[RMDB]
RNA sequence: GGGAACGACUCGAGUAGAGUCGAAAAGCCCGUUAAACAUCUUUUCACAAUUGGGUGUUUAUUCGCAGUUCAAAAAGCAAAAGUUUUGGCUGCAAUCUGCGAAAGCAAGGCCAAAGCGCUGUCUGGCUUCAAUAAUCAUAUCUUUACUCUUCCAAAACCAUGACUAUGCGUUCGCGCAUAGUCAUGGAAAAGAAACAACAACAACAAC
Reactivity to 2A3 in 0.01 (KOAc 150mM, MgCl2 10mM, bicine 150mM(pH8.5), 24C), signal-to-noise 1, nucleotides 027 to 156: g070c010c000c000g000u020u050a010a010a010c000a010u060c000u020u090u180u170c290a150c100a170a170u170u120g000g000g010u010g020u040u040u040a090u100u060c040g000c010a010g000u200u230c050a080a000a030a010a140g040c040a150a090a010a110g050u000u040u050u000g010g000c000u010g010c030a000a020u070c080u060g000c000g040a050a040a020g010c030a060a040g060g000c000c020a060a030a010g000c110g030c080u010g060u040c040u040g000g010c000u080u070c090a050a150u070a290a060u070c070a080u120a060u200c020u060u130u110a170c070u010c000u100u000c100c000a020a000a010a060

The data come from the RNA Mapping Database (RMDB), library OK3TST. An RNA of 207 nucleotides, treated with 2A3 and read out base by base. The reactions ran in a buffer of 150 mM KOAc, 10 mM MgCl2 and 150 mM bicine (pH 8.5), at 24 C. For 2A3 the reverse transcriptase was SuperScript II with manganese.